[RMDB]
RNA sequence: GGGAACGACUCGAGUAGAGUCGAAAAGCUAAGAUCAAUGAGCAAGAGUGAUGACUUGCAAAUAUACAGCAUCUGUAUAAAGUCAGUGCUUCUGAAAUAUUAGUAUACAUCAGCAUCCCCUGGAGGGCUCUGUGCAUGAUUUCGAUCAUGCACAGAGAAAAGAAACAACAACAACAAC
Reactivity to DMS in 0.01 (KOAc 150mM, MgCl2 10mM, bicine 150mM(pH8.5), 24C), signal-to-noise 2, nucleotides 027 to 126: g010c020u000a020a020g010a060u000c030a060a120u000g010a120g000c050a050a060g000a060g030u010g020a070u000g000a090c010u000u000g020c180a090a100a140u000a040u000a010c030a050g060c200a110u000c060u000g020u000a270u010a040a040a090g000u000c000a020g010u010g000c010u000u000c040u010g000a050a080a080u000a060u000u020a050g000u000a040u000a070c120a080u000c070a040g000c060a060u010c040c010c010c070u000g000g000a060g020g000g020
Reactivity to 2A3 in 0.01 (KOAc 150mM, MgCl2 10mM, bicine 150mM(pH8.5), 24C), signal-to-noise 2, nucleotides 027 to 126: g010c000u050a080a000g040a080u140c060a080a120u160g010a060g020c020a040a050g020a010g060u100g050a070u050g020a040c000u040u040g030c030a030a130a010u130a000u010a000c020a010g070c050a080u150c130u060g010u030a040u030a100a050a030g030u020c010a000g040u010g110c020u060u120c020u040g050a100a040a040u130a020u090u050a010g010u020a050u040a140c040a040u040c020a000g030c020a050u060c040c020c000c000u020g090g010a060g080g000g000
The record gives the reactivity of an RNA of 177 nucleotides to DMS and 2A3. Reactivities are given for positions 27 through 126. The 2A3 profile rests on 1,587 reads. The data come from the RNA Mapping Database (RMDB), library OK2TST. For 2A3 the reverse transcriptase was SuperScript II with manganese. Conditions: 150 mM KOAc, 10 mM MgCl2 and 150 mM bicine (pH 8.5), 24 C.